RNA sequence: GGGAACGACUCGAGUAGAGUCGAAAACUGCUGCUGUCCCACAUAAAUGCACUCACUGUGCUGAAGUCAUAUGGUGUGGGCAGUCUGCAUUCUGAGGUGUACAUACCCGCAUUGGGUGUGUCUGCAUUCCUCAAAGAGACCAUAAAAACUGGUCUAGCGGUAAUUAACACUUCGGUGUUAAUUACCGAAAAGAAACAACAACAACAAC
Reactivity to DMS in 0.01 (KOAc 150mM, MgCl2 10mM, bicine 150mM(pH8.5), 24C), signal-to-noise 2, nucleotides 027 to 156: c070u000g010c000u000g020c040u000g000u010c010c030c000a060c030a070u000a070a080a080u000g000c070a030c010u000c090a090c090u000g030u000g040c040u000g030a090a160g020u000c070a150u000a010u000g010g060u000g050u000g010g010g020c030a020g000u000c050u020g010c000a080u000u020c020u000g010a050g010g070u010g010u010a080c020a020u000a000c000c000c020g040c200a170u000u020g010g000g020u010g010u000g000u000c060u010g070c070a090u000u000c000c000u000c040a030a090a230g000a060g010a030c000c000a060u010a090a060a110a130a170c250u000g010g000u000c010u000a060g010
Reactivity to 2A3 in 0.01 (KOAc 150mM, MgCl2 10mM, bicine 150mM(pH8.5), 24C), signal-to-noise 6, nucleotides 027 to 156: c030u030g010c010u010g000c000u020g080u300c020c080c000a010c000a020u130a050a250a010u070g020c060a010c010u080c010a070c090u230g050u100g190c090u010g020a090a050g080u090c030a050u090a090u270g170g000u020g020u030g010g000g000c000a000g000u020c090u030g010c010a070u130u060c050u060g010a020g000g020u030g010u030a000c000a000u000a000c000c000c030g010c250a300u290u300g000g000g010u010g000u000g000u010c010u010g000c000a030u090u140c010c010u000c000a020a130a010g100a010g010a010c020c020a020u210a100a280a050a020a030c070u020g010g000u010c000u020a050g060
Source: RMDB library OK3TST, as collected in RNAgym.
The record gives the reactivity of an RNA of 207 nucleotides to DMS and 2A3.
As a SHAPE reagent, 2A3 marks flexible, mostly unpaired nucleotides at the ribose 2'-OH.
The reactions ran in a buffer of 150 mM KOAc, 10 mM MgCl2 and 150 mM bicine (pH 8.5), at 24 C.
DMS (dimethyl sulfate) methylates the pairing face of unpaired adenines and cytosines.
Values cover nucleotides 27 to 156.